[RMDB]
RNA sequence: GGGAACGACUCGAGUAGAGUCGAAAAGAUAUGGAGCGUACGCGAGUAGAGGCAUCCUACCCACCUCACAUGGUCGGAAACGACCAUGUGAGAGGGAUGCUACCCACCUACUCACGCUCCUAAGUCACUAAUUAUAACCGUUCGCGGUUAUAAUUAGAAAAGAAACAACAACAACAAC
Reactivity to DMS in 0.01 (KOAc 150mM, MgCl2 10mM, bicine 150mM(pH8.5), 24C), signal-to-noise 5, nucleotides 027 to 126: g000a020u000a040u010g000g000a020g030c020g030u010a130c300g030c300g000a020g000u000a010g010a150g020g000c000a000u000c000c000u030a180c240c150c210a300c250c000u020c000a010c000a000u000g000g010u000c010g020g010a010a030a040c010g000a000c000c010a000u000g000u000g000a010g010a030g010g000g000a000u000g010c010u000a060c090c070c140a300c070c010u010a000c010u000c020a060c000g020c000u010c000c010u000a010a070g000u010c030a300
Reactivity to 2A3 in 0.01 (KOAc 150mM, MgCl2 10mM, bicine 150mM(pH8.5), 24C), signal-to-noise 2, nucleotides 027 to 126: g000a000u010a000u100g000g000a020g000c030g030u120a130c300g110c080g300a010g000u010a000g000a070g010g000c000a010u000c000c000u150a270c070c060c030a080c010c010u000c010a000c000a010u000g000g000u000c000g020g000a030a000a010c000g000a000c000c000a010u000g000u000g000a000g000a000g000g000g000a000u010g000c010u050a060c050c050c020a060c020c010u010a000c000u010c010a000c000g000c000u000c000c000u000a000a000g010u000c010a020